About this RNA: Structure probing data (2A3 and DMS) for a 177-nucleotide construct. Values cover nucleotides 27 to 126. It was measured as part of the RMDB library OK2TST. For 2A3, 1,375 sequencing reads were counted.
RNA sequence: GGGAACGACUCGAGUAGAGUCGAAAACGCAUCUACCAUAUGCGCACUCAUUCUUACACCCCCGGUCAUUAACCAGUAACGCGUAGAUACCCUCCCGGCCGCUUAGCACCACUUGGUUGACGAGAGGCGUUAUAGGGUGUUUCGACACCCUAUAACGAAAAGAAACAACAACAACAAC
Reactivity to 2A3 in 0.01 (KOAc 150mM, MgCl2 10mM, bicine 150mM(pH8.5), 24C), signal-to-noise 1, nucleotides 027 to 126: c010g000c010a010u070c070u130a070c040c030a060u040a010u170g020c020g000c020a040c060u010c060a160u120u000c030u070u150a060c060a120c030c010c010c030c000g000g020u030c040a070u040u090a040a040c020c000a040g020u060a020a030c050g000c020g060u060a030g020a080u110a090c000c010c020u020c030c000c000g020g010c040c000g010c010u040u040a010g030c000a010c040c000a040c060u000u010g040g020u060u040g030a000c030g010a010g010a010g120g020
Reactivity to DMS in 0.01 (KOAc 150mM, MgCl2 10mM, bicine 150mM(pH8.5), 24C), signal-to-noise 4, nucleotides 027 to 126: c080g000c020a030u000c100u010a100c110c090a090u010a090u000g000c030g010c080a110c070u000c090a110u010u000c040u000u000a110c150a190c040c030c000c030c020g030g010u000c050a080u010u010a080a080c070c040a080g000u010a090a070c100g040c080g010u000a080g000a110u010a090c050c020c020u010c020c010c020g000g020c020c050g000c050u000u000a070g000c030a070c040c020a140c120u000u000g000g040u000u010g000a080c040g010a070g010a060g000g010